[RMDB]
RNA sequence: GGGAACGACUCGAGUAGAGUCGAAAAAUUUACGACUCUCAAGCGAAGCGAGUGCUAGCAUGCUCGAUAGCACUAAACAAAACAGGAAACUGAAAAUCGAGCAAUCGCUAGUGUCGUUCCCAUACAAGCUACUCACCAAUUUCGAUUGGUGAGUAGCAAAAGAAACAACAACAACAAC
Reactivity to 2A3 in 0.01 (KOAc 150mM, MgCl2 10mM, bicine 150mM(pH8.5), 24C), signal-to-noise 1, nucleotides 027 to 126: a000u120u130u100a060c000g020a000c010u000c000u000c010a120a040g110c020g150a080a000g090c010g080a040g100u160g070c000u020a000g000c010a010u030g000c010u000c000g010a010u040a000g100c030a000c140u150a060a060a030c060a000a080a000a010c010a000g030g030a050a070a020c000u040g090a080a120a040a070u020c000g000a000g000c000a000a040u110c100g000c010u010a000g010u020g010u000c010g000u010u000c000c000c000a000u000a000c000a010a000